[RMDB]
RNA sequence: GGGAACGACUCGAGUAGAGUCGAAAAGAUAUGGAUCUACUAGGACAUGUCGGAAUGUCGGAAACGACAUUUCGACAACAGCCUAUGUAGAUCCUAAGUCAAAGGAACGAGGUUCGCCUCGUUCCAACAAUCCCCAAGUCUUCGGACUUGGGGAUUGAAAAGAAACAACAACAACAAC
Reactivity to DMS in 0.01 (KOAc 150mM, MgCl2 10mM, bicine 150mM(pH8.5), 24C), signal-to-noise 2, nucleotides 027 to 126: g000a060u000a090u010g000g000a020u000c000u000a000c000u000a020g000g000a030c110a220u010g020u020c000g000g000a000a000u000g010u000c000g000g010a020a010a070c010g020a000c000a010u010u000u010c000g010a000c000a020a030c270a180g010c000c020u000a010u040g010u000a000g010a010u020c000c000u000a000a070g000u000c020a080a140a110g010g000a010a000c000g000a000g000g000u000u010c300g000c000c000u000c000g000u000u000c000c000a040a090
Reactivity to 2A3 in 0.01 (KOAc 150mM, MgCl2 10mM, bicine 150mM(pH8.5), 24C), signal-to-noise 1, nucleotides 027 to 126: g000a010u020a030u050g000g000a000u000c010u010a000c000u000a000g040g010a040c140a300u300g000u000c000g010g000a010a000u010g000u000c000g010g000a040a010a000c020g000a000c000a000u000u020u000c010g010a000c010a000a000c010a040g060c000c000u060a030u120g020u000a000g010a000u020c000c000u000a000a000g000u010c020a070a050a300g000g000a010a000c010g000a010g050g030u070u190c250g250c020c020u010c000g020u000u030c010c000a000a000